Conditions: 150 mM KOAc, 10 mM MgCl2 and 150 mM bicine (pH 8.5), 24 C.
An RNA of 177 nucleotides, treated with 2A3 and DMS and read out base by base.
The DMS profile rests on 1,478 reads.
Values cover nucleotides 27 to 126.
[RMDB]
RNA sequence: GGGAACGACUCGAGUAGAGUCGAAAAGUCUAGGGUACCAUGCGACGAUCCUAGACAUGGAUCGACAUGUCGACGUAGUACUCCAUGCAUGGAUCUACUAGCUAGGCACGAUCCAUGUAGCGCGUACCGCGUAAGACCGGUUCGCCGGUCUUACGCGAAAAGAAACAACAACAACAAC
Reactivity to 2A3 in 0.01 (KOAc 150mM, MgCl2 10mM, bicine 150mM(pH8.5), 24C), signal-to-noise 2, nucleotides 027 to 126: g000u040c030u050a010g070g000g040u030a060c020c050a090u240g050c080g040a070c020g000a050u060c020c000u030a050g000a040c000a000u010g000g060a010u010c020g020a070c060a160u130g030u030c020g020a040c080g000u020a000g000u030a060c020u000c030c000a060u160g080c000a130u100g000g000a020u020c010u000a040c000u050a040g130c100u130a050g030g020c060a050c090g060a020u000c000c000a010u030g030u040a010g040c060g010c010g030u010a040c050
Reactivity to DMS in 0.01 (KOAc 150mM, MgCl2 10mM, bicine 150mM(pH8.5), 24C), signal-to-noise 2, nucleotides 027 to 126: g010u010c000u000a070g030g010g000u000a060c050c030a100u010g020c120g010a110c090g030a070u000c000c010u000a050g000a060c090a010u000g000g040a020u020c000g010a170c180a190u000g000u010c020g000a180c260g010u000a030g000u000a020c170u000c020c000a110u010g000c140a060u000g010g000a000u000c090u000a040c050u000a070g000c100u010a130g020g030c030a050c130g000a020u000c000c010a000u000g000u000a070g030c090g010c080g040u010a060c160